[RMDB]
RNA sequence: GGGAACGACUCGAGUAGAGUCGAAAAGAUAUGGAACAGAGGGAGACUAAGCGUGCUCGUGAUGACCUUUCUCGGAAACGAGAAAGCAAGCGAGACACGCUUAGUCGAGGAUCUCUGUUCCUAAGUCGAACAUGAGAAACUUCGGUUUCUCAUGUUCAAAAGAAACAACAACAACAAC
Reactivity to DMS in 0.01 (KOAc 150mM, MgCl2 10mM, bicine 150mM(pH8.5), 24C), signal-to-noise 2, nucleotides 027 to 126: g020a120u000a300u030g020g020a030a030c000a020g000a020g000g000g000a020g020a020c000u000a000a000g010c010g050u000g000c010u000c000g010u000g000a100u000g000a100c300c000u010u000u000c000u010c010g000g000a140a070a190c000g040a000g000a000a000a000g020c090a070a130g010c010g000a000g000a150c020a000c000g000c000u000u000a000g000u000c010g000a030g010g000a030u000c000u000c000u000g000u000u010c010c000u010a010a100g000u010c090

Chemical mapping of a 177-nucleotide RNA with DMS. For DMS, 1,832 sequencing reads were counted. The reactions ran in a buffer of 150 mM KOAc, 10 mM MgCl2 and 150 mM bicine (pH 8.5), at 24 C.